[RMDB]
RNA sequence: GGGAACGACUCGAGUAGAGUCGAAAAGAGAACACUCUCGUACGAGUUCGAUCGUUCGUGUUCACUCACUCGAGUACACGUACGUGUGUUCUCACUCGUGAGUACGUUCGUGUUCGUUCACUCUCGAGUUCACACUCACACACUCUCGAACGAACUCCUGUUCGGAGUGUUUCGACACUCCGAACAGAAAAGAAACAACAACAACAAC
Reactivity to 2A3 in 0.01 (KOAc 150mM, MgCl2 10mM, bicine 150mM(pH8.5), 24C), signal-to-noise 5, nucleotides 027 to 156: g070a000g010a000a000c010a000c030u080c030u030c080g030u080a020c100g000a030g050u060u090c080g090a160u060c030g070u100u070c060g000u020g020u120u260c110a050c130u010c000a090c060u100c070g000a000g010u020a010c010a000c020g030u050a010c010g000u010g020u020g010u030u010c020u000c010a010c010u010c000g020u040g020a020g000u080a160c110g040u020u030c040g030u050g040u090u040c030g000u050u010c040a030c040u040c010u020c030g010a010g020u080u070c070a090c030a040c070u120c020a040c000a010c000a020c070u090c020u060c100g030a010a000c010g010a000a000c010u000c050
Reactivity to DMS in 0.01 (KOAc 150mM, MgCl2 10mM, bicine 150mM(pH8.5), 24C), signal-to-noise 1, nucleotides 027 to 156: g000a040g000a040a020c000a060c010u000c100u010c050g070u010a080c000g000a070g000u000u010c070g030a130u000c040g020u000u000c040g010u020g030u000u000c080a130c070u010c070a100c110u000c050g010a100g020u000a070c150a060c000g100u000a010c100g020u000g040u020g000u000u010c020u010c020a050c030u000c070g000u000g000a030g000u000a010c120g000u000u020c040g040u000g000u010u010c020g000u000u000c000a050c010u000c100u010c040g040a060g030u010u000c090a160c150a180c070u010c030a040c100a170c090a110c060u010c010u010c100g000a010a010c050g020a040a010c010u000c040